The data come from the RNA Mapping Database (RMDB), library 15KLIB.
Structure probing data (DMS and 2A3) for a 170-nucleotide construct.
The reactions ran in a buffer of 150 mM KOAc, 10 mM MgCl2 and 150 mM bicine (pH 8.5), at 24 C.
DMS adducts were read by reverse transcription with MarathonRT.
For 2A3, 43,238 sequencing reads were counted.

[RMDB]
RNA sequence: GGGAACGACUCGAGUAGAGUCGAAAAGAAGAGUAUAUCCCAUGGGAAUCCCUGGGUUCCCCUCGUGUCCAGCCCCUCCCCGGUCCGAUGGAAGGGGGACUCCGGGACACCUUGCAUGCUGGGGACGAAGCUCCCCGGUUCGCCGGGGAGAAAAGAAACAACAACAACAAC
Reactivity to DMS in 0.01 (KOAc 150mM, MgCl2 10mM, bicine 150mM(pH8.5), 24C), signal-to-noise 9, nucleotides 027 to 129: g010a100a060g030a010g010u050a100u020a090u040c020c030c020a110u070g010g000g010a130a220u010c010c000c000u000g010g010g020u000u000c000c000c000c000u010c100g000u060g040u010c000c060a060g040c040c010c030c030u030c020c030c010c080g040g020u020c060c140g030a120u030g000g030a090a030g060g000g030g000g000a030c040u020c030c090g010g000g020a040c050a040c020c020u020u040g030c080a060u040g000c060u020g000g000g000g000a060c010g000a130a100g000
Reactivity to 2A3 in 0.01 (KOAc 150mM, MgCl2 10mM, bicine 150mM(pH8.5), 24C), signal-to-noise 9, nucleotides 027 to 129: g060a030a010g070a010g070u130a050u030a050u200c010c020c020a020u060g020g010g020a060a110u060c020c010c030u040g010g010g000u020u020c000c000c010c010u030c030g170u180g150u010c020c030a030g020c040c000c000c020u040c000c000c000c000g020g020u050c020c030g070a070u080g060g070a040a040g020g000g000g000g000a010c010u000c010c020g000g000g000a000c000a040c010c010u050u120g050c050a070u090g000c010u030g010g000g010g010a010c030g030a050a020g040